Structure probing data (DMS and 2A3) for a 170-nucleotide construct.
[RMDB]
RNA sequence: GGGAACGACUCGAGUAGAGUCGAAAAGUUGCUGGUGCUCGCAUUCCAGACGUACCUACUACAUUGGCUUGGGUGAACAAUCAGAUAAUUUUCUUUGUUUCUCGAGUCUUUGCUAAUACAGGCAGUGAACGGACUCCCUUCGGGGAGUCCAAAAGAAACAACAACAACAAC
Reactivity to DMS in 0.01 (KOAc 150mM, MgCl2 10mM, bicine 150mM(pH8.5), 24C), signal-to-noise 1, nucleotides 027 to 129: g010u060u030g010c010u020g010g000u060g040c040u020c030g020c160a130u040u040c100c160a040g000a040c180g010u020a080c130c000u020a070c110u000a100c080a060u070u000g060g030c140u100u000g000g050g010u060g010a000a000c060a020a000u060c170a000g030a120u010a120a150u150u070u000u010c090u020u040u050g050u000u060u110c000u040c010g000a000g000u050c000u000u000u000g060c090u050a040a100u030a130c200a160g020g000c070a080g000u040g070a100a000c170
Reactivity to 2A3 in 0.01 (KOAc 150mM, MgCl2 10mM, bicine 150mM(pH8.5), 24C), signal-to-noise 3, nucleotides 027 to 129: g080u030u010g050c020u020g030g050u010g000c060u000c140g100c110a050u100u100c050c000a010g010a000c070g000u000a010c030c000u040a120c040u010a000c000a040u020u020g010g000c000u020u010g000g000g000u100g000a010a010c000a000a070u200c040a010g020a060u090a140a300u190u180u050u060c010u000u060u020g010u010u010u050c000u020c040g060a040g040u060c040u000u010u020g000c040u000a050a100u070a080c060a010g020g020c010a020g030u000g070a040a010c030
For 2A3, 2,479 sequencing reads were counted.